An RNA of 177 nucleotides, treated with DMS and read out base by base. Conditions: 150 mM KOAc, 10 mM MgCl2 and 150 mM bicine (pH 8.5), 24 C. Source: RMDB library OK2TST, as collected in RNAgym. For DMS the reverse transcriptase was MarathonRT.
RNA sequence: GGGAACGACUCGAGUAGAGUCGAAAAGGGGUUCUGCGGUGGCGAUGAUUGACCGGUAUAGGAAGCGCAAGGGGGCCUGAUUAGGUGUCUGGUGUUGUUGGGUCUCAGGUUCCUCGUCACCGUGUGGCGUGCUCAUUACGUUCGCGUAAUGAGCACGAAAAGAAACAACAACAACAAC
Reactivity to DMS in 0.01 (KOAc 150mM, MgCl2 10mM, bicine 150mM(pH8.5), 24C), signal-to-noise 1, nucleotides 027 to 126: g030g000g000g020u000u000c060u000g010c020g000g020u000g000g000c010g000a060u000g020a200u000u020g030a110c010c000g050g000u010a130u020a150g030g000a110a130g000c040g000c110a120a130g000g010g020g010g030c000c000u000g000a140u010u000a030g030g020u000g000u020c020u010g000g000u000g020u000u000g000u000u000g020g000g000u010c040u000c040a070g010g010u000u010c020c010u000c000g010u000c000a020c010c020g010u000g000u000g010g000